[RMDB]
RNA sequence: GGGAACGACUCGAGUAGAGUCGAAAAACUAAUAAAAAAGUAGUUCGCGUUGUCGUUAUCUUAAUGCUAAUCGCGAUUGUAUUAUCCAGCGUUUUAACCGGGGUAUUAAUGUUUUUAUAGAUAUCCGCCUUAUGUAUCUGUUCGCAGAUACAUAAGGAAAAGAAACAACAACAACAAC
Reactivity to DMS in 0.01 (KOAc 150mM, MgCl2 10mM, bicine 150mM(pH8.5), 24C), signal-to-noise 1, nucleotides 027 to 126: a060c030u000a020a050u030a030a030a090a120a120a140g000u000a080g010u000u010c000g000c080g000u000u000g000u000c010g020u020u000a080u010c190u010u010a010a050u000g010c030u000a060a040u000c040g020c010g010a030u000u000g010u000a060u000u000a040u000c080c050a130g020c060g020u010u000u000u000a040a160c100c110g000g040g010g000u000a020u000u000a060a050u010g000u000u010u000u010u000a040u000a090g020a060u000a040u000c010c010g020
Reactivity to 2A3 in 0.01 (KOAc 150mM, MgCl2 10mM, bicine 150mM(pH8.5), 24C), signal-to-noise 1, nucleotides 027 to 126: a000c030u030a030a140u190a140a100a070a030a030a140g100u090a040g000u080u020c000g000c010g040u000u030g080u060c030g010u070u000a140u170c090u060u110a040a020u130g000c000u010a050a080u170c000g000c020g020a020u010u040g070u050a050u130u000a020u030c020c020a010g140c030g030u070u070u170u060a040a000c000c030g010g000g040g020u020a020u030u130a020a040u020g010u090u070u010u000u170a070u040a060g010a030u040a000u020c000c010g020